Overview:
Conditions: 150 mM KOAc, 10 mM MgCl2 and 150 mM bicine (pH 8.5), 24 C. The record gives the reactivity of an RNA of 207 nucleotides to 2A3 and DMS. In probing experiments dimethyl sulfate is read out at A N1 and C N3, which are open when not base-paired.
RNA sequence: GGGAACGACUCGAGUAGAGUCGAAAACGCUGGGAUCUUCGGGGACAUGCGAUUACCUGAAGCGCGCACGGGUACUCGCAACAGCUCUCUAGCGUGAGAUCCUGUGCUGAAGCGCGCACGGCAACCGAAAGGUGCGAAAGAUGAGUUCGCUCAUCAACUAGUCGUUUAGAUUCGUCUAAACGACUAGAAAAGAAACAACAACAACAAC
Reactivity to 2A3 in 0.01 (KOAc 150mM, MgCl2 10mM, bicine 150mM(pH8.5), 24C), signal-to-noise 4, nucleotides 027 to 156: c040g000c010u020g000g000g020a020u000c010u080u070c080g040g000g000g050a020c040a090u050g000c000g030a020u000u000a000c000c000u020g040a190a060g000c000g010c000g010c010a030c020g000g000g000u010a010c020u000c010g000c020a040a050c040a060g010c010u000c000u010c070u190a040g060c040g060u110g030a010g000a010u000c000c020u050g080u100g040c040u090g040a080a020g000c010g030c020g000c010a000c020g090g000c030a090a130c030c010g050a100a010a030g020g000u040g020c020g050a150a060a050g010a010u030g010a000g060u080u170c240g070c110u010c010a000u000c010a010a020
Reactivity to DMS in 0.01 (KOAc 150mM, MgCl2 10mM, bicine 150mM(pH8.5), 24C), signal-to-noise 1, nucleotides 027 to 156: c100g000c030u000g010g030g010a050u000c030u000u000c080g020g000g000g050a080c140a300u000g010c010g040a010u000u000a090c000c020u020g020a050a080g000c000g030c010g060c020a300c030g030g000g010u000a050c200u000c000g000c000a040a050c080a130g060c040u000c090u000c040u000a120g030c110g020u000g000a050g000a100u000c000c000u000g000u000g010c000u000g000a100a090g020c030g040c010g000c050a130c070g000g000c060a070a080c000c020g000a060a170a300g040g020u000g010c030g010a100a120a100g030a030u000g000a050g070u000u000c270g020c010u000c010a060u000c010a040a260